[RMDB]
RNA sequence: GGGAACGACUCGAGUAGAGUCGAAAAGCGUAUGCGCAGCCAGAUAUAAAGAAGAUUGGAAACGCCGGUUAUGACGAUCAUGCCGAGCGCCAGCGCAUAGCCCAGAUUCUGGUUAUGCAGCACGUCAGUGCUUUUAAUGAUUCGUCAUUAAAAGCACAAAAGAAACAACAACAACAAC
Reactivity to 2A3 in 0.01 (KOAc 150mM, MgCl2 10mM, bicine 150mM(pH8.5), 24C), signal-to-noise 9, nucleotides 027 to 126: g010c010g030u070a030u110g010c010g000c000a000g010c000c000a010g020a020u100a010u070a150a160a020g140a070a020g100a170u040u120g020g020a110a080a020c030g010c010c010g030g010u160u300a030u040g040a050c090g020a090u200c020a010u050g000c010c000g030a040g010c020g000c010c000a020g000c030g000c030a040u060a050g010c010c010c000a040g030a090u090u040c010u030g020g000u020u010a040u090g040c040a040g010c050a010c030g040u050c080a050
Reactivity to DMS in 0.01 (KOAc 150mM, MgCl2 10mM, bicine 150mM(pH8.5), 24C), signal-to-noise 9, nucleotides 027 to 126: g010c080g010u000a040u000g010c010g010c040a050g010c010c010a040g000a060u000a160u010a070a080a120g010a130a110g000a120u000u010g010g000a090a060a180c090g010c010c020g000g010u000u010a040u000g010a130c170g000a120u010c050a050u000g000c010c020g010a160g010c020g000c020c030a040g010c070g010c060a040u010a070g010c030c020c070a110g010a140u000u000c030u000g000g010u000u000a060u000g010c030a050g020c100a030c050g010u010c130a120

The record gives the reactivity of an RNA of 177 nucleotides to 2A3 and DMS.
Reactivities are given for positions 27 through 126.
DMS adducts were read by reverse transcription with MarathonRT.